[RMDB]
RNA sequence: GGGAACGACUCGAGUAGAGUCGAAAAGAGCUGUAGUACAGCAAGAAGCACGCGAUCCUUGGCACCGCGUGCAAGAUAAUUAAGCCGGCAAAGAAGGAAAGCCGGCAUAAGUGCCAAGUAAGAGAGACAUAGUAGGCACUUUCGAGUGCCUACUAUGAAAAGAAACAACAACAACAAC
Reactivity to 2A3 in 0.01 (KOAc 150mM, MgCl2 10mM, bicine 150mM(pH8.5), 24C), signal-to-noise 5, nucleotides 027 to 126: g120a000g000c000u010g020u140a080g110u110a110c000a010g000c000a000a010g100a050a020g020c000a000c010g010c000g010a040u080c030c030u000u000g000g000c000a010c000c000g000c000g000u000g000c000a000a000g020a020u220a110a070u280u050a100a030g000c000c000g000g000c040a090a060a170g180a120a080g150g050a120a080a020g000c000c000g000g000c000a010u010a000a000g010u000g000c000c040a000a000g000u020a030a010g100a010g010a010g000a020
Reactivity to DMS in 0.01 (KOAc 150mM, MgCl2 10mM, bicine 150mM(pH8.5), 24C), signal-to-noise 3, nucleotides 027 to 126: g050a210g030c010u000g000u020a130g000u020a300c010a050g020c000a110a100g000a070a180g000c000a000c000g010c020g000a160u030c100c000u000u000g000g040c000a000c070c010g000c000g010u010g020c000a030a000g000a170u050a060a070u050u040a140a110g010c000c000g000g000c010a060a090a110g040a260a280g000g000a090a090a140g010c000c000g000g000c000a000u010a030a030g000u010g000c000c000a000a010g020u050a030a040g010a120g000a150g010a110
This 177-nucleotide RNA was probed chemically with 2A3 and DMS.
For DMS, 3,704 sequencing reads were counted.
For 2A3, 7,451 sequencing reads were counted.
The data come from the RNA Mapping Database (RMDB), library OK1LIB.